The record gives the reactivity of an RNA of 177 nucleotides to DMS and 2A3.
RNA sequence: GGGAACGACUCGAGUAGAGUCGAAAAGAAAGAAAGAAAGAAGGUAUCUUUAUUACGCAGUGACGUCAGCGCCUCUUGUCAUACACCACAGAGGUGAUGACGUCACUGAUGACAUGAAGAUGCUAAACACAUGACUUCACUUCGGUGAAGUCAUGUGAAAAGAAACAACAACAACAAC
Reactivity to DMS in 0.01 (KOAc 150mM, MgCl2 10mM, bicine 150mM(pH8.5), 24C), signal-to-noise 3, nucleotides 027 to 126: g010a070a080a090g000a080a170a080g010a130a080a110g010a080a140g010g040u000a010u000c000u000u000u000a000u000u030a160c300g010c010a000g000u000g000a000c010g020u000c000a010g010c000g000c000c000u000c000u000u020g020u000c180a160u020a130c300a030c300c200a020c080a010g000a010g000g010u000g010a010u000g000a000c000g010u000c000a000c000u000g000a000u020g000a090c300a060u000g000a000a010g000a020u000g000c030u000a060a080a140
Reactivity to 2A3 in 0.01 (KOAc 150mM, MgCl2 10mM, bicine 150mM(pH8.5), 24C), signal-to-noise 3, nucleotides 027 to 126: g050a010a060a000g090a010a070a020g130a000a080a030g180a060a050g010g010u020a000u000c000u000u030u000a030u020u040a040c120g020c020a000g000u000g010a000c000g000u000c000a010g020c020g000c030c000u000c010u030u030g040u020c030a100u070a300c090a060c100c030a050c060a020g000a000g000g000u010g000a000u000g000a000c010g000u000c000a000c010u000g000a000u000g000a000c000a000u010g000a000a000g000a000u010g000c000u030a020a110a010

2A3 adducts were read by reverse transcription with SuperScript II with manganese. Conditions: 150 mM KOAc, 10 mM MgCl2 and 150 mM bicine (pH 8.5), 24 C. The data come from the RNA Mapping Database (RMDB), libraries RFM100 and RFMREP.